[RMDB]
RNA sequence: GGGAACGACUCGAGUAGAGUCGAAAAUGCGGACCGCAGCGCGGCGAUGUCGAAGGCGUAGACGCCGGCGUUGACUUCGCGGAUUUCCCGCUGCGAUGGUGUCGCGUCGGUUUGCUCCACGAUCGCCACACGAAAGGUGAUUCGUCACCUUUCGUGUAAAAGAAACAACAACAACAAC
Reactivity to DMS in 0.01 (KOAc 150mM, MgCl2 10mM, bicine 150mM(pH8.5), 24C), signal-to-noise 3, nucleotides 027 to 126: u010g010c040g000g010a120c040c050g020c080a070g010c080g030c040g000g000c010g000a030u010g010u010c040g010a220a140g000g000c050g040u010a140g000a090c130g030c010c000g000g010c030g010u000u000g000a060c030u000u000c010g010c000g010g000a080u000u000u000c040c030c010g000c020u000g000c010g000a030u010g000g010u010g010u000c020g000c010g010u000c010g000g000u000u000u010g000c060u010c050c040a130c090g010a080u000c030g010c020c090
Reactivity to 2A3 in 0.01 (KOAc 150mM, MgCl2 10mM, bicine 150mM(pH8.5), 24C), signal-to-noise 3, nucleotides 027 to 126: u130g010c040g030g040a050c040c040g000c050a040g050c020g000c040g080g000c030g060a060u070g060u170c020g060a140a050g000g000c010g000u040a040g070a120c070g000c000c010g020g020c000g010u050u270g010a020c000u020u010c000g010c000g000g000a020u070u050u030c010c000c000g010c040u020g000c010g050a040u040g060g180u180g000u070c050g010c030g020u010c030g000g060u060u150u110g040c050u030c030c030a120c020g020a040u050c040g020c040c000